[RMDB]
RNA sequence: GGGAACGACUCGAGUAGAGUCGAAAAUUGCGACCUGUGCGCCUCGCACGGCAACCCUCUCGAGAAGACCGAGAAGGACUUUGAGAUCGUCAUGAACUCGCCGGCUACCGGCCCGGUGAAGCAGCUGACCACCGCGCAGCGCCUCGCCGCGAUCCUCCCUGCCCUCUAAAUUCGUUUAGAGGGCAGGAAAAGAAACAACAACAACAAC
Reactivity to 2A3 in 0.01 (KOAc 150mM, MgCl2 10mM, bicine 150mM(pH8.5), 24C), signal-to-noise 3, nucleotides 027 to 156: u040u110g010c000g020a040c020c030u030g060u110g040c020g000c030c070u160c140g000c020a020c000g000g010c020a060a080c000c030c020u020c000u010c010g100a120g020a260a190g080a200c080c030g010a010g010a050a120g020g000a040c090u080u120u200g090a080g030a100u150c040g000u020c040a050u120g030a120a100c030u030c050g000c000c000g000g050c030u150a250c100c110g110g000c090c020c020g000g000u010g000a020a030g020c060a030g000c040u000g020a090c030c020a080c080c080g030c000g030c010a010g000c000g000c020c000u010c000g000c000c020g010c010g000a040u000c010c000u040c040